[RMDB]
RNA sequence: GGGAACGACUCGAGUAGAGUCGAAAAGAUAUGGAACAUCUAUCGCAGCUAUGAAGUUAGUCGGAAACGACUAAUGGAGCUGAUGAUAGAGUGUUCCUAAGUCAAAAGAGCUGCGUUCGCGCAGCUCCGUAAGCCCAAACUUCGGUUUGGGCUUACGAAAAGAAACAACAACAACAAC
Reactivity to 2A3 in 0.01 (KOAc 150mM, MgCl2 10mM, bicine 150mM(pH8.5), 24C), signal-to-noise 1, nucleotides 027 to 126: g030a010u050a020u190g010g000a000a000c000a020u030c000u040a000u030c020g000c010a000g050c000u010a210u300g020a000a020g010u010u000a000g000u000c010g020g000a080a030a070c010g000a000c000u010a000a000u020g010g000a000g000c020u040g080a300u160g000a000u020a000g010a000g010u020g030u000u010c000c000u000a130a000g020u000c030a060a060a100a180g010a000g000c000u000g000c010g040u100u130c150g040c020g030c090a000g020c000u010c000
Reactivity to DMS in 0.01 (KOAc 150mM, MgCl2 10mM, bicine 150mM(pH8.5), 24C), signal-to-noise 2, nucleotides 027 to 126: g000a010u030a300u010g010g020a020a000c010a050u000c010u000a000u010c000g000c010a000g000c000u010a300u030g010a150a160g020u000u000a000g010u000c010g000g000a130a110a280c010g020a000c000u000a010a000u000g000g030a020g030c000u000g010a030u010g000a010u000a000g000a030g020u000g010u000u010c000c000u000a000a130g020u000c000a050a060a130a160g000a030g030c000u000g030c040g040u000u010c190g000c020g020c010a000g010c000u000c020